[RMDB]
RNA sequence: GGGAACGACUCGAGUAGAGUCGAAAAGCGUGGUUCUAGUGUUGGCAAAGAUUAUAAUGCUGAAGAUACAUGCAAGGAACUUAAGUAAAACUAGGUCAUAAUAUGUGAGACAGAAAAACUCUAGAACGACACUUUCGUAUUUCGAUACGAAAGUGUCAAAAGAAACAACAACAACAAC
Reactivity to DMS in 0.01 (KOAc 150mM, MgCl2 10mM, bicine 150mM(pH8.5), 24C), signal-to-noise 3, nucleotides 027 to 126: g010c130g010u000g000g030u000u000c020u000a030g000u010g000u000u000g030g010c070a050a070a150g010a090u010u010a120u000a140a170u010g020c040u000g020a150a050g000a210u000a050c050a010u010g010c170a120a100g000g010a130a070c030u000u000a010a070g010u010a070a040a050a200c110u000a040g010g010u000c010a110u000a060a080u000a020u000g000u000g000a130g000a150c120a070g000a020a090a070a050a050c040u000c010u000a040g010a120a080c050
Reactivity to 2A3 in 0.01 (KOAc 150mM, MgCl2 10mM, bicine 150mM(pH8.5), 24C), signal-to-noise 2, nucleotides 027 to 126: g070c050g060u090g010g000u060u080c020u010a010g030u000g040u060u100g030g000c000a060a140a050g050a050u090u100a060u120a260a120u130g020c020u030g050a060a000g070a040u090a080c010a010u040g000c030a060a070g070g010a080a000c010u040u010a050a000g050u070a020a080a030a050c010u020a000g000g000u000c010a030u100a180a050u100a100u090g050u000g030a030g030a030c000a000g150a050a050a000a010a000c020u030c010u010a040g000a040a000c040
Conditions: 150 mM KOAc, 10 mM MgCl2 and 150 mM bicine (pH 8.5), 24 C. The record gives the reactivity of an RNA of 177 nucleotides to DMS and 2A3. For 2A3, 1,380 sequencing reads were counted. 2A3 adducts were read by reverse transcription with SuperScript II with manganese. Reactivities are given for positions 27 through 126.